[RMDB]
Conditions: 150 mM KOAc, 10 mM MgCl2 and 150 mM bicine (pH 8.5), 24 C. The record gives the reactivity of an RNA of 177 nucleotides to 2A3 and DMS. DMS adducts were read by reverse transcription with MarathonRT. 2A3 is a SHAPE reagent: it acylates the 2'-hydroxyl of flexible nucleotides of all four kinds.
RNA sequence: GGGAACGACUCGAGUAGAGUCGAAAAUGAAACAACUUUUAAACUAAGUAAAUGCAAUAAAUUGAAUGGGAUAUAUUGCAUUUCUAUUUUUGUAUUUAUACGUUUACUUUCAUUGACUGCUUGGUUACUUAAUGUAGUUUUUCGAAACUACAUUAAGAAAAGAAACAACAACAACAAC
Reactivity to 2A3 in 0.01 (KOAc 150mM, MgCl2 10mM, bicine 150mM(pH8.5), 24C), signal-to-noise 5, nucleotides 027 to 126: u030g010a030a010a020c040a030a090c090u130u130u100u210a040a020a020c020u030a270a080g020u020a020a030a000u010g000c000a010a040u060a180a080a040u090u050g070a060a080u110g020g090g080a020u070a010u050a050u250u140g010c000a000u030u080u060c010u020a050u010u040u020u040u060g010u000a060u000u050u010a050u010a020c020g010u000u000u040a030c010u030u050u020c010a020u010u040g050a050c010u030g060c030u160u060g120g050u150u100a080
Reactivity to DMS in 0.01 (KOAc 150mM, MgCl2 10mM, bicine 150mM(pH8.5), 24C), signal-to-noise 5, nucleotides 027 to 126: u000g000a050a030a050c110a060a090c110u000u010u010u000a030a040a110c040u000a040a150g010u000a000a020a010u000g000c000a010a010u010a000a050a040u000u000g000a080a060u000g000g010g000a070u010a100u000a080u000u000g000c020a020u000u000u000c040u000a020u000u000u000u000u010g000u010a050u010u010u000a010u000a210c090g010u000u000u000a060c190u000u000u000c010a030u000u000g010a120c070u000g010c120u000u000g020g020u000u000a140